Description
This 207-nucleotide RNA was probed chemically with 2A3 and DMS. The reactions ran in a buffer of 150 mM KOAc, 10 mM MgCl2 and 150 mM bicine (pH 8.5), at 24 C.

RNA sequence: GGGAACGACUCGAGUAGAGUCGAAAACAGGUCUCUGCAACGGAUGGUAUAAAAGGGAUAACACGUCCUCGACUCGUUAUUAGAUACACUGACGGGGGAACGACGUAUAAACGCCGCGUAAACCUCCCAUCACUUUACACGAGUGGUAGAGAGACAGCAAAUCAUUUUGAUUCGUCAAAAUGAUUUGAAAAGAAACAACAACAACAAC
Reactivity to 2A3 in 0.01 (KOAc 150mM, MgCl2 10mM, bicine 150mM(pH8.5), 24C), signal-to-noise 9, nucleotides 027 to 156: c040a040g100g000u000c000u000c010u080g070c100a120a070c060g020g010a060u180g020g070u120a100u110a130a100a070a070g060g010g000a040u060a100a060c070a000c060g010u010c010c020u040c040g090a080c020u000c010g030u000u000a040u030u100a060g110a170u150a150c110a020c130u050g010a010c010g010g000g000g000g010a020a030c000g020a010c000g030u030a030u130a100a100a020c120g050c060c010g090c020g050u050a070a010a090c000c000u000c010c000c000a020u020c000a010c010u070u060u200a100c130a020c140g020a010g000u010g030g010u110a030g010a000g000a000g010a070c010a000g050
Reactivity to DMS in 0.01 (KOAc 150mM, MgCl2 10mM, bicine 150mM(pH8.5), 24C), signal-to-noise 4, nucleotides 027 to 156: c040a100g010g020u000c020u010c010u010g030c050a180a090c050g010g000a060u000g020g020u000a130u000a080a090a070a070g010g010g010a170u010a070a120c080a110c040g010u000c010c040u000c030g020a150c010u000c010g010u000u000a110u010u000a120g010a270u010a090c140a120c130u010g010a040c010g020g000g000g020g000a110a040c040g000a010c000g010u000a110u000a080a100a080c040g030c000c000g000c020g030u000a050a060a070c030c030u000c000c010c020a030u000c020a000c020u000u000u000a080c140a090c110g010a020g020u000g000g020u010a100g010a050g010a050g000a060c030a130g020